[RMDB]
RNA sequence: GGGAACGACUCGAGUAGAGUCGAAAAGAAAGAAAGAAGCGAGCUGGCGCAGCCGCACGGGCAACCGUCAAUCCAGCACUUCACAAGUCUUGUCGUUCUGACAGGACAUCCAUCAACCCACCGGGAUAAAAGGACUACAGCUUCGGCUGUAGUCCAAGAGUAGUAUCUUCUUCGGAAGAUACUACUCAAAAGAAACAACAACAACAAC
Reactivity to 2A3 in 0.01 (KOAc 150mM, MgCl2 10mM, bicine 150mM(pH8.5), 24C), signal-to-noise 2, nucleotides 027 to 156: g030a000a070a010g040a020a070a000g000a020a010g040c120g100a010g010c040u010g040g020c050g010c110a050g090c100c130g020c100a040c020g030g010g000c060a070a110c020c010g030u040c030a010a040u050c010c000a000g050c030a060c030u040u040c040a050c060a220a020g000u000c010u000u010g000u000c000g070u260u210c140u280g000a000c000a000g010g010a000c000a000u010c000c010a030u050c050a050a140c000c000c020a010c010c060g000g000g040a040u110a140a140a020a030g000g010a030c000u000a000c000a000g020c000u040u100c190g140g000c000u010g000u000a000g010u000c010c000a000a000